The record gives the reactivity of an RNA of 177 nucleotides to DMS. Conditions: 150 mM KOAc, 10 mM MgCl2 and 150 mM bicine (pH 8.5), 24 C. For DMS the reverse transcriptase was MarathonRT. Reactivities are given for positions 27 through 126. It was measured as part of the RMDB library VIROID.
RNA sequence: GGGAACGACUCGAGUAGAGUCGAAAACAUCUGAUGUAGAAGCAAUGGCGCAGUCCUAGGCAUCGACGGUGUCGAAGCAAUGGCGUAGACCUCAGGCACCGAGUAUGUGUAUCGGAGCGAGCUUGGCCCCCUUAGUUUAGUUCGCUAAACUAAGGGGAAAAGAAACAACAACAACAAC
Reactivity to DMS in 0.01 (KOAc 150mM, MgCl2 10mM, bicine 150mM(pH8.5), 24C), signal-to-noise 3, nucleotides 027 to 126: c090a060u000c080u000g010a070u000g010u000a060g000a080a090g020c070a110a070u000g000g000c040g010c070a070g010u000c020c010u000a100g010g010c010a010u000c070g020a120c030g020g000u000g030u000c010g010a110a100g010c040a120a050u020g000g020c010g000u010a120g010a180c010c000u000c040a070g000g000c010a020c010c010g010a060g030u010a030u000g000u000g000u000a090u010c130g000g010a090g020c040g010a090g000c020u000u000g020g010c070